[RMDB]
RNA sequence: GGGAACGACUCGAGUAGAGUCGAAAACUCUGCUAAUUCGUUAGCAGAGGUACACUGGGACGGGUCGGGAGGGGGAUACUCGCGGACCCAAGAAGAAUCCAGCAAGCACAUUAUUCGUAAUGUGCAAUAGUAAUACAUGUUUCGACAUGUAUUACUAAAAAGAAACAACAACAACAAC
Reactivity to 2A3 in 0.01 (KOAc 150mM, MgCl2 10mM, bicine 150mM(pH8.5), 24C), signal-to-noise 7, nucleotides 027 to 126: c000u000c000u000g000c000u010a020a020u070u060c210g080u060u010a000g000c000a000g000a000g000g010u030a020c100a010c040u050g030g030g240a060c060g040g010g140u200c100g050g040g090a250g040g040g000g010g020a020u060a090c010u010c010g060c020g040g020a030c000c020c010a000a010g020a010a000g030a010a040u030c020c010a010g030c080a130a020g000c000a010c000a000u010u030a010u070u090c180g060u060a000a010u000g000u000g010c000a000a000
Reactivity to DMS in 0.01 (KOAc 150mM, MgCl2 10mM, bicine 150mM(pH8.5), 24C), signal-to-noise 9, nucleotides 027 to 126: c000u000c000u010g010c000u000a010a030u000u020c200g020u000u000a000g010c000a010g010a010g000g000u000a020c130a160c020u000g000g000g000a140c170g010g000g010u010c060g000g000g010a300g000g010g010g020g010a050u000a010c040u000c030g020c090g000g010a040c010c010c010a050a060g010a110a070g000a080a090u010c020c030a070g010c190a080a110g010c000a010c000a000u000u000a030u000u010c200g010u000a010a010u000g010u000g010c000a050a040

Conditions: 150 mM KOAc, 10 mM MgCl2 and 150 mM bicine (pH 8.5), 24 C. Chemical mapping of a 177-nucleotide RNA with 2A3 and DMS. DMS (dimethyl sulfate) methylates the pairing face of unpaired adenines and cytosines. For 2A3, 20,782 sequencing reads were counted. The DMS profile rests on 16,448 reads. Reactivities are given for positions 27 through 126.